The data come from the RNA Mapping Database (RMDB), library OK2TST. An RNA of 177 nucleotides, treated with DMS and 2A3 and read out base by base. For 2A3 the reverse transcriptase was SuperScript II with manganese. Values cover nucleotides 27 to 126. The RNA was probed in 150 mM KOAc, 10 mM MgCl2 and 150 mM bicine (pH 8.5) at 24 C. High 2A3 reactivity points to a flexible backbone, as in loops and unpaired stretches.
[RMDB]
RNA sequence: GGGAACGACUCGAGUAGAGUCGAAAAUCUUUAUACUUCUCCACCCAGCGUCGCUCAGUGUUAUAGAGAUCUUCAAAACGUUCUGCGCGAUGCGAAAGCACUUGCAUCUCUUGCACCAACUUGGCGAUAAUCGUAAAUGCUUCGGCAUUUACGAUUAAAAAGAAACAACAACAACAAC
Reactivity to DMS in 0.01 (KOAc 150mM, MgCl2 10mM, bicine 150mM(pH8.5), 24C), signal-to-noise 2, nucleotides 027 to 126: u020c060u020u020u020a150u000a080c080u000u000c020u010c020c040a110c020c030c070a210g020c020g020u000c020g000c010u000c060a020g010u040g010u010u010a060u000a140g000a050g010a140u020c110u000u010c090a110a040a080a070c060g000u010u000c030u000g030c120g020c040g010a050u000g020c030g000a040a070a080g010c050a070c100u000u000g020c080a030u010c030u010c040u000u000g000c070a040c000c030a040a070c100u000u010g000g000c050g000a120
Reactivity to 2A3 in 0.01 (KOAc 150mM, MgCl2 10mM, bicine 150mM(pH8.5), 24C), signal-to-noise 2, nucleotides 027 to 126: u050c010u010u180u060a140u050a100c040u090u000c010u000c050c000a020c040c000c010a040g010c000g030u010c010g020c030u020c020a040g000u010g060u170u050a110u170a130g060a010g010a190u060c060u110u040c060a050a060a050a060c030g050u150u000c010u030g000c040g000c030g040a050u020g000c000g000a040a030a000g060c020a000c030u040u060g030c030a030u030c030u010c010u060u000g020c010a020c000c010a060a100c010u030u090g070g000c080g020a050